[RMDB]
RNA sequence: GGGAACGACUCGAGUAGAGUCGAAAAGGUAGCAGAGAAGAGACUAGGCUUCAGACUAGAUAGUAUCACACUACUGGUACAUAGUAGAGACAUACAUAGAUGUGUAUGACACAUCAGAGCUGCCAUGCGUCAUAUGAGCGUUCGCGCUCAUAUGACGAAAAGAAACAACAACAACAAC
Reactivity to DMS in 0.01 (KOAc 150mM, MgCl2 10mM, bicine 150mM(pH8.5), 24C), signal-to-noise 3, nucleotides 027 to 126: g000g040u000a000g020c000a100g000a120g010a110a130g000a190g010a140c090u000a030g010g010c050u010u010c190a170g000a080c040u000a020g000a110u000a150g020u000a030u000c130a100c280a090c050u010a020c060u010g000g000u020a080c200a080u000a020g010u000a020g020a110g010a190c220a050u000a000c050a060u000a090g010a050u010g020u000g020u000a120u000g010a090c030a020c050a030u000c000a110g000a140g000c030u000g030c010c040a040u000g000
Reactivity to 2A3 in 0.01 (KOAc 150mM, MgCl2 10mM, bicine 150mM(pH8.5), 24C), signal-to-noise 1, nucleotides 027 to 126: g010g000u020a010g000c090a050g060a020g060a290a030g080a020g030a060c030u030a030g060g000c000u130u190c060a010g060a090c050u040a000g060a090u120a010g010u030a040u080c010a010c010a000c130u080a020c040u030g000g060u150a080c070a100u120a010g030u000a030g010a020g020a100c000a050u060a030c000a040u110a050g080a030u080g010u000g010u060a090u250g090a060c020a000c000a000u000c000a010g040a000g020c020u010g000c000c020a010u060g070
This 177-nucleotide RNA was probed chemically with DMS and 2A3.
The RNA was probed in 150 mM KOAc, 10 mM MgCl2 and 150 mM bicine (pH 8.5) at 24 C.
Reactivities are rounded to 0.1 and cut off at 0 and 3.